[RMDB]
RNA sequence: GGGAACGACUCGAGUAGAGUCGAAAAAGGCACGACAGCGUGCGUAGCAAACAGGAUUAGAUACCCUGGUAGUGCACGCCAUAAACGGUGGGCCCUAGGUGUGGGUUCCUACCACGGGAUCUGUGCCAAUAUAAUUGAUAUUCGUAUCAAUUAUAUUAAAAGAAACAACAACAACAAC
Reactivity to 2A3 in 0.01 (KOAc 150mM, MgCl2 10mM, bicine 150mM(pH8.5), 24C), signal-to-noise 9, nucleotides 027 to 126: a000g010g000c000a000c000g020a020c010a010g020c010g020u020g000c010g010u050a010g050c030a030a050a060c000a000g020g010a020u050u080a030g030a090u100a090c000c000c000u000g010g010u040a040g020u030g030c000a000c000g000c000c000a100u200a050a120a010c090g010g000u010g000g010g010c010c000c000u060a150g170g040u130g080u070g080g020g000u120u170c000c000u020a040c000c010a020c040g050g010g020a080u010c030u110g010u010g000c000c000
Reactivity to DMS in 0.01 (KOAc 150mM, MgCl2 10mM, bicine 150mM(pH8.5), 24C), signal-to-noise 9, nucleotides 027 to 126: a080g010g010c000a000c010g010a070c120a200g010c040g010u010g010c000g010u020a120g010c130a090a100a200c030a020g000g000a050u010u010a130g000a160u060a110c130c000c000u000g000g000u020a100g000u020g000c010a010c000g000c000c070a110u030a060a080a090c120g000g010u000g000g000g000c080c000c000u000a010g000g020u030g010u020g000g000g010u010u030c030c000u010a030c020c020a090c100g000g000g000a080u000c030u030g030u000g000c000c000